[RMDB]
RNA sequence: GGGAACGACUCGAGUAGAGUCGAAAAGAUAUGGAACACCCUAGACAUGCUAGUGCUCGGAAACGAGCAUAAUAGCAACAGCUAGCGGUGUUCCUAAGUCAAAACGAUGAACGUUCGCGUUCAUCGAUCAUUUGUGCCGGUUCGCCGGCACAAAUGAAAAAGAAACAACAACAACAAC
Reactivity to DMS in 0.01 (KOAc 150mM, MgCl2 10mM, bicine 150mM(pH8.5), 24C), signal-to-noise 1, nucleotides 027 to 126: g010a060u000a100u030g010g010a040a030c000a000c000c000c000u000a020g000a050c060a160u010g000c000u000a050g000u000g000c020u000c010g000g000a000a040a090c000g000a020g010c020a000u000a040a120u030a010g030c000a030a140c230a120g000c000u000a000g020c240g030g010u000g030u000u000c000c000u010a000a070g000u000c000a210a090a130a170c050g000a010u000g010a010a000c000g010u010u000c300g000c010g010u000u000c000a030u000c010g010a070
Source information:
Structure probing data (DMS) for a 177-nucleotide construct. Values are in units of 0.01, from 0 to 300, in steps of 10. The reactions ran in a buffer of 150 mM KOAc, 10 mM MgCl2 and 150 mM bicine (pH 8.5), at 24 C. Values cover nucleotides 27 to 126. The data come from the RNA Mapping Database (RMDB), library TTRDES.